[RMDB]
RNA sequence: GGGAACGACUCGAGUAGAGUCGAAAAGCAGCCUCAUAUACAUGAAUGACUGAUGUAGAGUUCGGUUGGAGCGACAAGUAUUUAGCUUGAGAUAGCUAAAUCACCUCGGUAUGAUUAGGGUGAGACCGUGCAGGUUAACAUUCGUGUUAACCUGCACAAAAGAAACAACAACAACAAC
Reactivity to DMS in 0.01 (KOAc 150mM, MgCl2 10mM, bicine 150mM(pH8.5), 24C), signal-to-noise 3, nucleotides 027 to 126: g020c070a090g000c040c020u030c030a110u000a100u030a120c070a080u010g010a060a060u030g020a060c030u020g000a050u000g010u030a090g010a150g020u010u010c060g010g010u020u020g000g010a100g000c030g020a070c070a050a080g020u020a040u000u000u000a000g020c000u000u000g010a180g010a060u010a030g010c000u010a010a010a010u000c060a080c030c010u010c030g030g010u000a050u010g000a080u030u040a110g020g000g010u030g000a090g010a090c120c060
Reactivity to 2A3 in 0.01 (KOAc 150mM, MgCl2 10mM, bicine 150mM(pH8.5), 24C), signal-to-noise 3, nucleotides 027 to 126: g040c020a020g050c010c000u050c030a060u100a020u050a080c060a030u130g140a160a080u080g050a060c030u020g010a030u040g120u130a020g030a040g160u070u060c030g000g030u040u040g040g020a010g030c010g040a020c010a060a010g040u060a020u020u000u000a000g000c000u010u020g000a010g010a040u090a040g000c000u000a020a010a000u000c000a010c010c000u030c030g060g000u090a060u100g110a130u080u130a040g000g070g000u010g050a060g040a010c000c050
Background
The record gives the reactivity of an RNA of 177 nucleotides to DMS and 2A3. The reactions ran in a buffer of 150 mM KOAc, 10 mM MgCl2 and 150 mM bicine (pH 8.5), at 24 C.